Source information:
Chemical mapping of a 177-nucleotide RNA with 2A3 and DMS. The DMS profile rests on 3,339 reads. The RNA was probed in 150 mM KOAc, 10 mM MgCl2 and 150 mM bicine (pH 8.5) at 24 C. For DMS the reverse transcriptase was MarathonRT.

RNA sequence: GGGAACGACUCGAGUAGAGUCGAAAAACUUUUUGAUUCGUCAAAAAGUAACUACCGAGAAUGCGACUCGGUAUACGCAAUUAACCCUUGGAAACAAGGGAACAAACUAACGUUUCGACGUUAGUAACCUUACUCUCUCUUUCGAGAGAGAGUAAGGAAAAGAAACAACAACAACAAC
Reactivity to 2A3 in 0.01 (KOAc 150mM, MgCl2 10mM, bicine 150mM(pH8.5), 24C), signal-to-noise 5, nucleotides 027 to 126: a000c010u040u020u000u000u000g010a010u020u040c090g030u010c060a000a000a000a000a000g000u010a030a070c040u020a010c000c010g000a010g060a120a140u240g100c130g120a060c010u000c000g000g020u000a010u020a000c020g000c030a040a110u130u100a180a150c010c000c000u000u010g010g020a020a040a010c000a000a000g000g010g010a020a010c010a010a080a010c000u010a000a010c000g010u020u080u110c270g070a020c000g000u000u010a000g010u010a000a040
Reactivity to DMS in 0.01 (KOAc 150mM, MgCl2 10mM, bicine 150mM(pH8.5), 24C), signal-to-noise 4, nucleotides 027 to 126: a000c000u000u000u000u000u000g010a010u000u010c180g010u000c000a010a010a000a000a000g000u000a110a100c200u000a010c010c000g000a030g010a120a060u020g020c300g000a050c010u000c000g000g010u000a000u010a050c250g000c180a090a090u020u000a140a130c010c000c000u000u000g000g000a180a080a200c000a000a020g000g000g000a030a020c160a040a060a020c020u000a000a000c000g000u000u000u010c210g010a030c020g000u000u000a010g000u000a050a100